[RMDB]
RNA sequence: GGGAACGACUCGAGUAGAGUCGAAAACAUGAUAGCAAGGGGAGCUGAUAAGUUAUGGUAGAUGAUAUUGAACAGCGGAUUUAUGAUCUUGUACGGCCUUAUGCUGGCUUCUAUAUGUUCACUAGAAAAUUCAGGAGAUGUUCGCAUCUCCUGAAUUAAAAGAAACAACAACAACAAC
Reactivity to 2A3 in 0.01 (KOAc 150mM, MgCl2 10mM, bicine 150mM(pH8.5), 24C), signal-to-noise 2, nucleotides 027 to 126: c010a030u090g020a090u110a030g040c040a030a040g000g000g000g010a020g000c010u040g040a070u040a090a020g030u080u100a030u140g090g030u070a050g000a100u050g030a020u000a020u100u090g040a030a010c010a050g060c010g010g020a020u020u080u040a130u200g060a000u010c030u050u100g060u090a030c050g030g010c010c000u040u060a060u110g060c040u020g020g000c010u060u000c040u120a110u010a040u110g010u040u080c050a050c070u000a030g090a040a180
Reactivity to DMS in 0.01 (KOAc 150mM, MgCl2 10mM, bicine 150mM(pH8.5), 24C), signal-to-noise 3, nucleotides 027 to 126: c050a070u000g000a090u000a090g020c060a110a050g000g000g000g010a070g000c070u000g010a040u010a050a080g010u000u010a070u010g010g010u000a050g000a070u000g010a070u010a070u000u000g000a090a060c040a080g030c090g000g000a080u010u010u010a050u020g000a050u000c040u000u000g000u000a070c120g010g000c110c080u000u000a070u010g020c100u000g010g010c050u000u000c060u000a070u010a070u010g000u000u000c070a040c070u000a110g000a070a060
Structure probing data (2A3 and DMS) for a 177-nucleotide construct. The data come from the RNA Mapping Database (RMDB), library OK2TST. For DMS, 3,355 sequencing reads were counted.